Structure probing data (DMS) for a 177-nucleotide construct. Values cover nucleotides 27 to 126. It was measured as part of the RMDB library OK2TRN.
[RMDB]
RNA sequence: GGGAACGACUCGAGUAGAGUCGAAAACUGAGACAGGCCCCCCGGAACCACCCUACAGCUUCCACCAGGUGACCAUUGACAAAGUCAGCCCCUAUGGGUUUUUUGCACAUGACCCUGUGAACCUGCCGAUGAGGCAGGGGUUCGCCCCUGCCUCAUCAAAAGAAACAACAACAACAAC
Reactivity to DMS in 0.01 (KOAc 150mM, MgCl2 10mM, bicine 150mM(pH8.5), 24C), signal-to-noise 2, nucleotides 027 to 126: c070u000g000a140g000a060c040a060g020g010c010c010c010c000c010c020g010g000a070a080c040c050a090c100c020c030u000a060c070a050g010c050u010u010c020c020a100c040c010a060g000g030u000g010a040c040c040a050u000u010g000a130c060a040a060a090g000u010c080a100g020c020c010c010c180u020a130u000g000g010g000u000u000u010u010u000u000g030c100a040c100a050u010g000a050c030c000c010u000g010u010g040a030a080c060c040u000g020c200c100